[RMDB]
RNA sequence: GGGAACGACUCGAGUAGAGUCGAAAAGAUAUGGAUUUAGAACUACGAAGAGCGAUGAAAGCUAUCGGAAACGAUAGCUGGAGCUCGACGCUAAAUCCUAAGUCAAACGUAUCCUUCGGGAUACGAAUCUUUAUUUGUCCUUCGGGACAAAUAAAGAAAAAGAAACAACAACAACAAC
Reactivity to 2A3 in 0.01 (KOAc 150mM, MgCl2 10mM, bicine 150mM(pH8.5), 24C), signal-to-noise 1, nucleotides 027 to 126: g020a000u000a060u100g000g000a020u000u030u000a050g020a150a120c130u270a060c300g170a210a260g010a020g000c010g200a260u030g040a020a010a000g000c000u000a000u000c010g010g020a050a060a000c010g000a010u020a000g000c010u000g000g000a000g000c010u000c000g000a000c000g000c020u010a000a000a030u020c000c000u000a070a020g010u020c050a120a040a060c000g020u030a000u000c030c000u000u060c290g150g030g010a000u010a010c020g000a000a000
Reactivity to DMS in 0.01 (KOAc 150mM, MgCl2 10mM, bicine 150mM(pH8.5), 24C), signal-to-noise 2, nucleotides 027 to 126: g000a030u000a300u030g000g000a000u000u000u000a010g000a130a140c160u030a200c100g030a080a290g010a010g010c010g000a100u010g000a160a100a040g000c010u000a000u010c000g010g010a060a050a100c000g000a000u000a000g000c000u000g000g000a050g020c000u000c010g020a180c070g000c000u000a000a000a030u000c000c000u000a040a110g000u000c020a070a100a180c000g020u000a000u000c000c000u000u000c240g020g010g000a010u000a000c000g000a040a090
About this RNA: The record gives the reactivity of an RNA of 177 nucleotides to 2A3 and DMS. Values cover nucleotides 27 to 126. For 2A3 the reverse transcriptase was SuperScript II with manganese. The RNA was probed in 150 mM KOAc, 10 mM MgCl2 and 150 mM bicine (pH 8.5) at 24 C.